Structure probing data (DMS and 2A3) for a 170-nucleotide construct. The data come from the RNA Mapping Database (RMDB), library 15KLIB. Values cover nucleotides 27 to 129. The DMS profile rests on 12,289 reads.
[RMDB]
RNA sequence: GGGAACGACUCGAGUAGAGUCGAAAAAUAGGCUUAUCAAGAGAGGUGGAGGGCCUGGCCCGAUGAAACCCGGCAGCCAGAAAUGGUGCCAAUUCCUCCAGCGGAAACGUUGAAAGAUGAGCCGAUGUAACUGGUGUCUUCGGACACCAGAAAAGAAACAACAACAACAAC
Reactivity to DMS in 0.01 (KOAc 150mM, MgCl2 10mM, bicine 150mM(pH8.5), 24C), signal-to-noise 4, nucleotides 027 to 129: a000u020a110g000g010c000u000u000a060u020c010a200a160g050a090g030a000g000g050u000g000g070a130g030g020g000c070c080u000g040g070c090c010c010g000a050u070g040a080a230a090c110c050c000g000g000c160a000g000c020c010a030g020a020a020a030u030g000g090u000g020c000c000a030a060u060u050c060c050u020c150c020a030g040c030g060g010a100a060a060c040g000u050u050g010a030a010a030g010a020u010g010a020g050c020c000g030a100u080g020u000a090a110
Reactivity to 2A3 in 0.01 (KOAc 150mM, MgCl2 10mM, bicine 150mM(pH8.5), 24C), signal-to-noise 3, nucleotides 027 to 129: a000u130a020g000g020c020u010u010a000u010c110a200a000g080a020g010a000g140g010u020g000g050a120g000g000g000c070c080u050g070g010c000c010c020g060a080u130g030a000a040a020c000c000c000g000g010c040a030g160c010c000a030g030a010a030a040u090g040g000u020g050c020c000a000a020u060u020c030c000u000c000c010a000g000c090g000g030a080a030a020c010g000u030u040g060a090a070a040g000a000u010g000a000g000c010c000g000a010u080g040u070a030a030
2A3 adducts were read by reverse transcription with SuperScript II with manganese.